Chemical mapping of a 177-nucleotide RNA with DMS.
RNA sequence: GGGAACGACUCGAGUAGAGUCGAAAAGAUAUGGAGAGGUAUACAAAUAUGAUACUAGACAUGCUAUGGCUCGGAAACGAGCCCGAUAGCAACAGCUAGGUCAUAUUUGUAUACCUCUCCUAAGUCAGAUUACAUGCACGUUCGCGUGCAUGUAAUCAAAAGAAACAACAACAACAAC
Reactivity to DMS in 0.01 (KOAc 150mM, MgCl2 10mM, bicine 150mM(pH8.5), 24C), signal-to-noise 1, nucleotides 027 to 126: g000a030u010a300u010g000g010a010g020a000g000g010u000a000u000a010c000a020a000a030u000a020u000g000a010u020a160c020u000a020g000a090c110a240u000g000c000u010a000u020g000g020c000u020c000g040g060a140a090a210c000g020a020g010c010c020c300g030a040u000a010g010c010a020a070c220a240g040c010u010a000g000g020u000c000a000u000a020u000u000u010g000u000a000u000a030c010c000u010c000u000c000c000u010a020a100g010u000c040a170
Conditions: 150 mM KOAc, 10 mM MgCl2 and 150 mM bicine (pH 8.5), 24 C.